[RMDB]
RNA sequence: GGGAACGACUCGAGUAGAGUCGAAAACAUCGAGACGGACUACUGGGACAAUGGGGUCCGGGUCCAGUUCAAUACAGAUGAUGACUUGGGCUUAGGGUCCUACGUACAGUUCCACUAGCAGUUUGCAAGCUUCAGUAGGCUUCGGCCUACUGAAGCUAAAAGAAACAACAACAACAAC
Reactivity to 2A3 in 0.01 (KOAc 150mM, MgCl2 10mM, bicine 150mM(pH8.5), 24C), signal-to-noise 2, nucleotides 027 to 126: c080a000u280c100g130a010g000a040c110g050g000a060c040u000a010c000u120g050g000g070a000c080a000a240u230g000g000g000g000u000c000c000g000g000g010u010c000c000a020g020u050u090c000a000a150u150a300c030a000g160a220u120g080a090u110g000a150c020u190u130g000g000g020c000u030u000a300g090g050g000u000c000c000u020a000c000g020u010a040c000a100g000u000u000c000c000a040c050u050a000g010c010a090g050u300u290u060g010c100a050
An RNA of 177 nucleotides, treated with 2A3 and read out base by base. High 2A3 reactivity points to a flexible backbone, as in loops and unpaired stretches.